[RMDB]
RNA sequence: GGGAACGACUCGAGUAGAGUCGAAAACAGGUUAGCUGUUCAUGUGGGCCCUGACAGGCGGCAAGUUGGGCAGUGAAACCUUAAGUAGUCUGAAUAUGAGUGUAGACGUUGGGGUGGCAAUAUGCUAGGACGCGGGUUCGAUCCCCGCCGGCUCCAUCAAUCCCGUAUGGUUCGCCAUACGGGAUUGAAAAGAAACAACAACAACAAC
Reactivity to 2A3 in 0.01 (KOAc 150mM, MgCl2 10mM, bicine 150mM(pH8.5), 24C), signal-to-noise 2, nucleotides 027 to 156: c050a010g040g010u040u020a020g020c000u020g020u030u010c030a040u070g080u150g140g130g000c000c000c000u060g130a060c050a060g060g000c080g050g000c020a060a000g090u130u020g010g000g020c010a010g010u020g020a150a060a000c010c000u010u030a100a010g010u000a020g020u010c070u030g120a110a070u130a130u160g060a040g070u030g000u070a040g060a030c050g000u010u050g050g020g010g000u030g000g000c010a010a130u170a070u210g040c040u040a010g060g000a040c020g010c010g010g010g030u040u040c020g000a060u080c020c010c000c000g020c000c010g010g020c000u000c020c020a030u000
The record gives the reactivity of an RNA of 207 nucleotides to 2A3. For 2A3 the reverse transcriptase was SuperScript II with manganese. The reactions ran in a buffer of 150 mM KOAc, 10 mM MgCl2 and 150 mM bicine (pH 8.5), at 24 C.